This 177-nucleotide RNA was probed chemically with DMS and 2A3. Reactivities are given for positions 27 through 126. 2A3 adducts were read by reverse transcription with SuperScript II with manganese. For 2A3, 2,150 sequencing reads were counted. Conditions: 150 mM KOAc, 10 mM MgCl2 and 150 mM bicine (pH 8.5), 24 C.
RNA sequence: GGGAACGACUCGAGUAGAGUCGAAAAUGUCCUCGCACCGGCGGACGGCGUCUCGGACGGCGCGGUAAUGGGGGGCGUGCUGCGGCUGCAGUUGUACGCCGAUACGAACGGGGAGAUCGGGACGCACACUUCCAUUGGGGUUCGCCCCAAUGGAAGUAAAAGAAACAACAACAACAAC
Reactivity to DMS in 0.01 (KOAc 150mM, MgCl2 10mM, bicine 150mM(pH8.5), 24C), signal-to-noise 2, nucleotides 027 to 126: u120g000u010c020c000u010c060g060c140a050c140c040g010g000c100g060g000a110c060g000g000c010g010u000c050u020c040g010g000a260c050g010g000c020g000c000g040g000u000a060a020u000g010g000g000g010g020g000c080g060u000g020c000u020g000c000g000g000c070u040g010c030a000g030u010u010g000u070a050c020g000c030c020g010a100u030a160c030g020a050a110c100g000g000g020g000a150g000a180u010c080g000g000g020a020c040g000c130a130c190
Reactivity to 2A3 in 0.01 (KOAc 150mM, MgCl2 10mM, bicine 150mM(pH8.5), 24C), signal-to-noise 3, nucleotides 027 to 126: u140g020u000c000c010u090c010g060c020a040c000c010g020g000c000g040g030a020c010g030g000c000g000u040c010u030c050g090g050a100c030g000g000c020g000c020g080g020u090a180a090u150g010g000g000g060g000g000c020g020u020g040c000u020g000c000g160g000c010u110g030c050a060g000u090u060g060u050a040c040g010c030c030g010a020u030a130c020g030a190a030c020g000g060g000g000a130g010a070u150c000g010g010g000a000c020g020c040a030c010